[RMDB]
RNA sequence: GGGAACGACUCGAGUAGAGUCGAAAACAAAACGUUCUUCGUGUAAUCGGUGCCAUCAUUUGCUGGCCACCUUCUGGGGCUGGCGCGCCCAGCAACUGCCCGACGGCACCGUGAUUUGGACGCUGCCGGGCACUUCAACGUUCGCGUUGAAGUGCCCAAAAGAAACAACAACAACAAC
Reactivity to 2A3 in 0.01 (KOAc 150mM, MgCl2 10mM, bicine 150mM(pH8.5), 24C), signal-to-noise 2, nucleotides 027 to 126: c020a000a120a040a040c020g060u030u040c050u120u110c050g080u130g070u220a090a110u050c000g010g000u030g000c020c010a070u080c010a030u080u050u070g000c050u040g020g030c020c000a090c030c010u130u120c130u250g030g050g020g020c040u000g080g010c010g010c020g000c020c000c000a000g020c000a020a050c000u040g030c020c100c010g000a070c060g000g000c030a060c180c020g000u040g060a060u010u000u100g020g000a010c080g000c050u030g110c000c020